[RMDB]
RNA sequence: GGGAACGACUCGAGUAGAGUCGAAAAACCGGCGGUAAAUCAACUCAGUUGAAAGCCGCGAGCGCUUUGGGUGCGAACUCACAGGACAGCAGAUCCGGUGUAAUUCCGGGGCCGACGGUUAGAGUCCAAAAGAGGUUAUCGUUCGCGAUAACCUCAACAUUGUUGUAUGCUUCGGCAUACAACAAUGAAAAGAAACAACAACAACAAC
Reactivity to DMS in 0.01 (KOAc 150mM, MgCl2 10mM, bicine 150mM(pH8.5), 24C), signal-to-noise 2, nucleotides 027 to 156: a050c010c000g000g000c010g060g010u010a020a110a190u010c030a020a040c040u000c100a110g000u000u000g010a070a100a300g000c030c000g030c100g000a070g070c050g020c060u000u000u000g010g010g030u010g000c090g000a160a090c010u000c020a020c040a120g000g010a050c010a100g000c000a080g010a300u000c030c000g030g000u000g000u000a180a300u010u000c000c010g000g010g000g000c020c030g030a070c050g000g050u000u010a120g000a220g020u010c000c030a000a040a070a150g000a010g000g010u010u010a000u000c010g000u010u010c300g040c030g030a030u000a000a000c000c000u000c000a000a060
Reactivity to 2A3 in 0.01 (KOAc 150mM, MgCl2 10mM, bicine 150mM(pH8.5), 24C), signal-to-noise 2, nucleotides 027 to 156: a000c000c000g020g000c010g010g000u100a170a130a170u040c020a020a030c030u100c300a140g040u000u020g060a100a060a020g040c030c030g010c030g030a030g030c060g030c040u120u150u150g050g000g040u040g070c030g020a100a040c020u000c000a000c000a040g020g070a060c020a100g070c010a040g030a120u040c010c000g020g000u010g010u080a070a040u130u000c010c010g000g000g000g030c010c030g020a050c010g000g030u010u030a090g020a020g180u020c020c060a000a100a020a050g010a000g000g010u000u000a000u000c000g010u030u050c190g000c000g110a000u000a000a000c000c000u000c000a000a000

Background: The record gives the reactivity of an RNA of 207 nucleotides to DMS and 2A3. The DMS profile rests on 2,251 reads. Values cover nucleotides 27 to 156. For 2A3, 1,096 sequencing reads were counted. Values are in units of 0.01, from 0 to 300, in steps of 10.